RNA sequence: GGGAACGACUCGAGUAGAGUCGAAAAAGCGAUAUUUCAGGUGUCAAAGGUGGGAGAUCCACAUCACGUGCUAUAAAGGAAGUAAGCAUACUAGUCAUCCUCAUGCAUUCCAUGAGGACCCAUUCCAACUGAAUGAGCACCCACUGCAUACCCAGCCUAUAUAAAUAGGCUUCGGCCUAUUUAUAUAAAAAGAAACAACAACAACAAC
Reactivity to 2A3 in 0.01 (KOAc 150mM, MgCl2 10mM, bicine 150mM(pH8.5), 24C), signal-to-noise 5, nucleotides 027 to 156: a000g060c050g020a060u050a080u080u120u070c040a030g000g030u030g050u090c080a090a070a040g050g000u040g020g030g010a110g000a060u090c060c000a060c030a070u090c050a040c100g030u030g010c020u050a040u120a280a110a060g070g020a030a070g060u080a080a000g030c020a030u040a150c040u060a080g090u080c040a030u020c010c000u010c000a000u020g030c050a070u280u150c060c000a000u010g000a000g010g000a010c000c000c000a050u100u050c030c030a060a040c070u020g030a040a040u060g010a010g000c010a040c010c010c000a030c050u080g010c020a040u070a130c020c020c000a000g020c010c010
Reactivity to DMS in 0.01 (KOAc 150mM, MgCl2 10mM, bicine 150mM(pH8.5), 24C), signal-to-noise 4, nucleotides 027 to 156: a090g010c030g000a160u010a050u010u010u000c040a080g000g020u010g000u020c020a090a100a130g040g020u000g020g020g050a090g000a110u010c010c040a070c020a090u000c070a080c080g030u000g000c050u010a120u000a070a070a110g000g010a070a110g030u000a060a100g010c040a080u000a060c060u000a100g010u000c050a200u010c000c010u020c000a030u000g030c070a200u000u000c130c020a030u000g020a040g000g000a040c010c030c040a110u000u000c040c030a090a100c090u000g010a050a040u000g000a080g020c010a110c020c020c000a120c120u000g000c040a080u000a080c010c020c030a300g010c060c090

The record gives the reactivity of an RNA of 207 nucleotides to 2A3 and DMS. For DMS the reverse transcriptase was MarathonRT.